[RMDB]
RNA sequence: GGGAACGACUCGAGUAGAGUCGAAAAGAAAGAAAAACCUGUCACUUAGUCAACCGACAAAAGAUGUCGGAAAAGAAAAGAAAAGAAAAGAUUGCGGCAGGAUGGCUAAGUAAAAGAAAAAGAAAAACCCUAUAGUAAUGUUCGCAUUACUAUAGGGAAAAGAAACAACAACAACAAC
Reactivity to 2A3 in 0.01 (KOAc 150mM, MgCl2 10mM, bicine 150mM(pH8.5), 24C), signal-to-noise 2, nucleotides 027 to 126: g010a060a040a000g080a010a060a040a060a000c030c010u040g000u030c030a010c030u020u050a010g000u070c020a030a080c000c000g020a050c010a000a210a010a000g130a150u120g000u000c040g000g070a000a070a000a120g030a000a050a010a000g110a020a060a000a020g160a140a120a040a030g100a060u060u070g050c050g030g010c000a000g000g070a030u030g000g000c000u000a000a110g030u100a030a100a050a050g070a040a130a060a020a040g070a050a060a020a010a010
Reactivity to DMS in 0.01 (KOAc 150mM, MgCl2 10mM, bicine 150mM(pH8.5), 24C), signal-to-noise 2, nucleotides 027 to 126: g000a070a130a220g020a200a110a060a110a040c050c030u010g000u020c050a050c030u060u000a010g000u000c010a040a100c000c010g010a010c030a040a040a070a140g010a200u010g000u010c020g040g000a030a040a140a150g000a080a030a120a080g010a090a070a050a140g000a090a130a140a130g000a040u020u000g000c140g000g060c000a040g000g000a070u010g030g000c060u000a000a060g000u000a080a060a030a050g020a090a030a050a050a110g000a110a080a080a090a150